[RMDB]
Structure probing data (DMS and 2A3) for a 177-nucleotide construct. For 2A3, 1,907 sequencing reads were counted. DMS adducts were read by reverse transcription with MarathonRT.
RNA sequence: GGGAACGACUCGAGUAGAGUCGAAAAGAUGCCUGUCUGGAGUAACGAUCCCCGUCUUCCGGCAUUAAUUCGUAUCGAUCAUGUCGGCGAUCAGGCCAUUUUUAUCUAUAUCACAGAACGGGAUGCCAUGCGCAAAAUACUUCGGUAUUUUGCGCAUAAAAGAAACAACAACAACAAC
Reactivity to DMS in 0.01 (KOAc 150mM, MgCl2 10mM, bicine 150mM(pH8.5), 24C), signal-to-noise 3, nucleotides 027 to 126: g000a030u000g010c020c020u000g010u030c060u020g000g000a050g000u010a040a140c200g000a110u020c050c080c020c080g000u010c050u030u010c020c020g010g020c020a020u000u030a090a200u060u000c020g000u000a120u020c000g020a050u000c160a060u000g010u020c040g020g000c300g020a090u020c100a090g000g000c080c070a020u010u010u020u000u030a000u010c070u020a130u040a060u020c070a090c030a090g000a010a030c010g000g000g000a040u030g030c050c020
Reactivity to 2A3 in 0.01 (KOAc 150mM, MgCl2 10mM, bicine 150mM(pH8.5), 24C), signal-to-noise 3, nucleotides 027 to 126: g050a000u080g020c000c010u020g050u010c010u020g000g060a090g100u110a060a030c060g030a110u110c010c000c050c000g030u010c040u120u040c000c010g000g000c000a000u000u070a110a140u050u040c030g020u080a170u300c120g000a020u090c000a020u100g010u020c000g000g040c000g040a030u040c010a050g030g020c020c000a040u090u120u040u090u040a040u040c040u040a050u010a030u130c030a020c000a080g100a100a020c040g010g010g020a000u010g040c000c020